[RMDB]
RNA sequence: GGGAACGACUCGAGUAGAGUCGAAAACCACCGCAAUUCGUUGCGGUGGGAAGGUGCAAUUCGCUGUCUGCACCACAGACGGCCAAUCCCUCAAAGCGAAAACUGGAGGGUCAUUCGUGACCCUCAAGUGGGUAACUAACUUCGGUUAGUUACCCACAAAAGAAACAACAACAACAAC
Reactivity to 2A3 in 0.01 (KOAc 150mM, MgCl2 10mM, bicine 150mM(pH8.5), 24C), signal-to-noise 2, nucleotides 027 to 126: c010c000a000c010c000g000c000a030a020u090u070c220g040u150u020g000c000g000g030u000g000g000g050a050a060g070g000u130g050c050a060a140u060u030c020g000c010u010g020u000c010u000g010c060a020c050c020a020c010a000g030a010c020g000g030c030c020a010a060u050c010c010c000u050c080a110a060a020g000c010g090a030a020a040a080c070u150g170g000a010g000g030g010u010c000a010u020u070c120g090u020g000a000c000c000c000u010c010a000a000
Reactivity to DMS in 0.01 (KOAc 150mM, MgCl2 10mM, bicine 150mM(pH8.5), 24C), signal-to-noise 2, nucleotides 027 to 126: c000c000a080c010c000g010c000a020a000u000u000c230g010u000u000g000c000g000g020u000g000g010g020a010a050g020g030u000g010c090a090a160u000u010c110g040c010u010g000u000c010u000g010c090a180c150c180a140c020a030g000a020c020g000g010c000c050a050a110u010c010c010c010u030c120a040a090a080g000c020g010a060a020a080a140c120u000g000g010a020g000g000g030u020c000a020u000u020c130g010u000g000a020c000c000c000u010c000a020a020